[RMDB]
RNA sequence: GGGAACGACUCGAGUAGAGUCGAAAACAAGUUCGUGCUUGCGACUUACACGUAGGGCGAGGGGUGGGCGAAAGUUGCCAUGAGACCGUAACUUUCGUAGUCUUUGAUAAAGGGGCAGGUCUCGCUCAAAAGACGUUGGUCUUCGGACCAACGUCAACCUUAAGAAUGGGUUCGCCCAUUCUUAAGGAAAAGAAACAACAACAACAAC
Reactivity to 2A3 in 0.01 (KOAc 150mM, MgCl2 10mM, bicine 150mM(pH8.5), 24C), signal-to-noise 3, nucleotides 027 to 156: c050a000a000g030u070u060c030g020u070g070c050u100u150g030c050g100a060c060u150u160a040c090a020c050g070u090a080g000g010g030c090g040a160g010g010g000g080u300g010g020g010c000g010a000a000a000g000u010u000g030c030c060a120u180g030a010g000a040c010c010g000u010a000a000c000u010u000u000c010g010u000a020g060u010c070u040u170u170g050a090u080a090a080a010g010g000g020g050c050a010g010g020u010c010u010c010g020c000u090c040a040a070a000a060g010a000c000g000u000u010g000g000u000c000u000u000c060g050g000a000c000c000a000a000c000g000u000c000a000a000
Chemical mapping of a 207-nucleotide RNA with 2A3.
Reactivities are given for positions 27 through 156.
For 2A3, 2,422 sequencing reads were counted.